The record gives the reactivity of an RNA of 177 nucleotides to 2A3 and DMS.
RNA sequence: GGGAACGACUCGAGUAGAGUCGAAAAAACUACAUUUUAUGAGGAAGACAAACAUUUAAUCUUUGGUUAUACACCAACGUGUGGUACUUGUAAGGUUUCAGAAAGAAUGUUAGACAUUGCUAAUGAAAACCGAUAGAGUCUUCGGACUCUAUCGGUUAAAAGAAACAACAACAACAAC
Reactivity to 2A3 in 0.01 (KOAc 150mM, MgCl2 10mM, bicine 150mM(pH8.5), 24C), signal-to-noise 2, nucleotides 027 to 126: a000a010c180u300a250c140a140u180u160u060u070a040u090g000a000g080g200a030a000g090a090c100a010a010a010c040a030u000u020u300a030a080u070c090u040u000u070g030g000u050u240a180u040a180c130a000c030c110a000a000c090g010u060g080u040g110g090u030a010c000u030u150g000u030a070a070g000g140u000u000u010c000a000g160a000a080a000g000a040a040u010g000u120u100a140g000a040c030a010u000u140g030c060u150a100a000u050g040a130a000
Reactivity to DMS in 0.01 (KOAc 150mM, MgCl2 10mM, bicine 150mM(pH8.5), 24C), signal-to-noise 1, nucleotides 027 to 126: a000a060c040u040a040c120a070u000u000u000u010a030u020g000a150g000g010a030a070g010a090c070a130a050a090c030a070u000u000u020a130a070u020c010u000u000u000g000g000u000u010a070u030a110c150a020c000c000a050a000c260g010u080g000u000g000g000u000a030c070u000u000g000u020a050a080g000g000u000u020u010c090a040g000a050a170a100g080a050a000u000g000u010u020a100g010a060c140a050u000u000g010c070u010a070a150u000g000a060a000
Notes
2A3 adducts were read by reverse transcription with SuperScript II with manganese. The reactions ran in a buffer of 150 mM KOAc, 10 mM MgCl2 and 150 mM bicine (pH 8.5), at 24 C.